[RMDB]
RNA sequence: GGGAACGACUCGAGUAGAGUCGAAAACGAUAAUUCAUGCUGUUGCCCCUGAUUAUAGGUUGGAACAUAACCCAAAGAGGCUUGAGGCUGCUUAUCGGGAGACUUGCUCCCGCCUCGGCACCGCUGCUAUCAAUCAUCCGUUCGCGGAUGAUUGAUAAAAAGAAACAACAACAACAAC
Reactivity to DMS in 0.01 (KOAc 150mM, MgCl2 10mM, bicine 150mM(pH8.5), 24C), signal-to-noise 3, nucleotides 027 to 126: c060g020a030u010a050a120u000u010c060a030u000g010c010u000g010u000u010g010c020c040c040c030u010g010a120u000u010a150u010a050g000g010u000u000g010g020a150a070c140a050u000a100a050c010c000c010a040a130a070g030a100g000g000c040u000u000g020a130g010g030c040u000g000c300u000u010a030u010c050g010g020g010a110g010a200c220u020u010g000c040u000c010c000c020g000c070c030u000c050g000g010c100a050c100c100g010c060u000g000c190
Reactivity to 2A3 in 0.01 (KOAc 150mM, MgCl2 10mM, bicine 150mM(pH8.5), 24C), signal-to-noise 2, nucleotides 027 to 126: c010g040a040u030a150a060u180u120c060a050u100g020c040u030g080u100u120g080c000c000c000c020u060g120a130u110u150a120u080a170g040g000u050u070g040g010a080a020c040a040u110a040a030c000c010c000a000a140a020g110a000g000g010c000u120u180g050a010g020g020c010u030g030c030u120u080a110u150c000g010g110g020a000g010a020c080u130u240g090c020u030c010c010c000g070c000c000u010c000g010g000c010a020c010c040g020c050u020g020c010